An RNA of 177 nucleotides, treated with DMS and read out base by base. For DMS the reverse transcriptase was MarathonRT. The reactions ran in a buffer of 150 mM KOAc, 10 mM MgCl2 and 150 mM bicine (pH 8.5), at 24 C. For DMS, 851 sequencing reads were counted.
RNA sequence: GGGAACGACUCGAGUAGAGUCGAAAAGUUACCCAUUUCGAUGGGUAACACACCGAACUCAGAAGUGUAACGCCGUAGCGCCGAUGGUAGUGUGGGGUCAAAGCUGUAGACCUUUCGAGGUCUACAAUAAUAUCGGCGGUUUCGACCGCCGAUAUUAAAAAGAAACAACAACAACAAC
Reactivity to DMS in 0.01 (KOAc 150mM, MgCl2 10mM, bicine 150mM(pH8.5), 24C), signal-to-noise 1, nucleotides 027 to 126: g010u010u000a000c000c000c000a040u000u030u000c160g030a030u000g000g000g010u000a000a000c010a080c130a180c060c000g000a090a080c120u000c070a110g010a140a130g020u010g000u000a050a060c190g000c060c070g010u000a070g020c110g000c000c000g000a060u000g000g000u000a030g010u000g000u000g010g000g000g010u000c090a150a080a050g060c170u010g000u010a010g000a040c000c010u000u000u000c150g000a010g040g000u000c000u000a000c000a030a060